This 177-nucleotide RNA was probed chemically with DMS and 2A3. 2A3 adducts were read by reverse transcription with SuperScript II with manganese.
[RMDB]
RNA sequence: GGGAACGACUCGAGUAGAGUCGAAAAGAUAUGGACCUACUUCUCGAUGAGAUAUACACUCUACCGUAACAUCAUUCGGAAACGAAUGUGGGUAGAGUGUAUAUCGAGAGGUGUAGGUCCUAAGUCAGUCUGAAAACUAGUUCGCUAGUUUUCAGACAAAAGAAACAACAACAACAAC
Reactivity to DMS in 0.01 (KOAc 150mM, MgCl2 10mM, bicine 150mM(pH8.5), 24C), signal-to-noise 2, nucleotides 027 to 126: g010a080u020a300u010g000g000a010c000c000u010a010c000u000u010c000u000c000g000a170u020g000a290g000a020u000a010u000a010c000a010c010u000c000u000a010c000c000g000u010a140a180c180a030u010c000a030u000u000c000g010g000a110a100a200c020g020a010a000u000g000u000g010g000g000u000a000g000a020g030u000g000u000a000u000a000u000c000g000a090g000a010g030g000u000g020u000a000g000g000u010c000c000u000a010a050g010u000c050a230
Reactivity to 2A3 in 0.01 (KOAc 150mM, MgCl2 10mM, bicine 150mM(pH8.5), 24C), signal-to-noise 2, nucleotides 027 to 126: g020a010u150a100u200g010g000a000c000c000u000a000c000u170u100c000u000c000g300a300u300g040a080g000a130u010a010u000a000c000a000c000u000c000u000a000c030c010g120u200a120a130c040a270u300c020a000u000u010c010g050g020a050a050a040c010g000a000a010u030g030u060g040g000g000u000a010g040a000g010u010g010u010a010u000a000u000c010g000a010g000a000g010g000u000g010u020a000g070g000u000c000c010u000a000a000g000u000c010a010

For DMS the reverse transcriptase was MarathonRT. The RNA was probed in 150 mM KOAc, 10 mM MgCl2 and 150 mM bicine (pH 8.5) at 24 C.